[RMDB]
RNA sequence: GGGAACGACUCGAGUAGAGUCGAAAAGGUGGGGACUCCAGACGUGUCCCCAAACCAGGGUGGCCUCAAGACCUUGGGAGAACACUUGUCUGAAGACUUGGGGAACAGAAGGAGACCAGGCAUGGCACUCUCUCUAGUUCUUCGGAACUAGAGAGAGAAAAGAAACAACAACAACAAC
Reactivity to 2A3 in 0.01 (KOAc 150mM, MgCl2 10mM, bicine 150mM(pH8.5), 24C), signal-to-noise 2, nucleotides 027 to 126: g100g010u080g020g050g010g030a090c000u020c000c020a010g010a120c050g060u060g250u090c000c010c000c030a010a070a000c030c000a000g030g000g010u020g010g080c000c050u090c100a080a000g130a130c020c000u030u020g040g090g010a050g040a040a020c080a030c120u140u160g060u090c040u110g180a200a060g020a110c010u020u050g000g000g000g000a020a020c010a010g090a110a000g010g010a020g010a010c030c000a000g010g000c060a040u070g050g010c020a040
Reactivity to DMS in 0.01 (KOAc 150mM, MgCl2 10mM, bicine 150mM(pH8.5), 24C), signal-to-noise 2, nucleotides 027 to 126: g010g020u000g020g010g000g020a130c010u000c020c050a060g000a260c160g010u000g000u000c000c000c000c000a010a020a130c050c060a080g000g000g010u000g020g020c070c050u000c090a090a080g000a050c150c110u000u000g000g030g000a070g010a140a050c110a070c050u000u010g010u010c040u000g020a200a150g000a070c060u020u000g000g000g000g020a300a030c020a070g010a230a150g000g000a090g000a180c050c020a050g010g000c050a060u000g000g030c120a150